[RMDB]
RNA sequence: GGGAACGACUCGAGUAGAGUCGAAAAGAUAUGGAGAGGCACGCGUUCAACAGCUCGGAAACGAGACAUGAACCGUGACCUCUCCUAAGUCAAAAGAUUUAAGUACGCUUCGGCGUACUUAAAUCAAUCCUUCAGCGAUGUUCGCAUCGCUGAAGGAAAAAGAAACAACAACAACAAC
Reactivity to DMS in 0.01 (KOAc 150mM, MgCl2 10mM, bicine 150mM(pH8.5), 24C), signal-to-noise 1, nucleotides 027 to 126: g030a020u000a300u000g010g000a000g010a000g000g020c000a010c000g010c260g000u000u000c000a030a100c270a130g010c000u000c000g000g000a110a070a190c000g010a020g000a030c060a140u000g000a000a000c040c000g000u000g010a050c010c000u000c000u000c000c000u000a000a020g000u040c010a080a070a170a190g010a000u000u010u000a000a000g000u000a020c010g000c000u000u030c180g020g000c000g020u000a000c010u000u000a000a000a000u000c000a050a080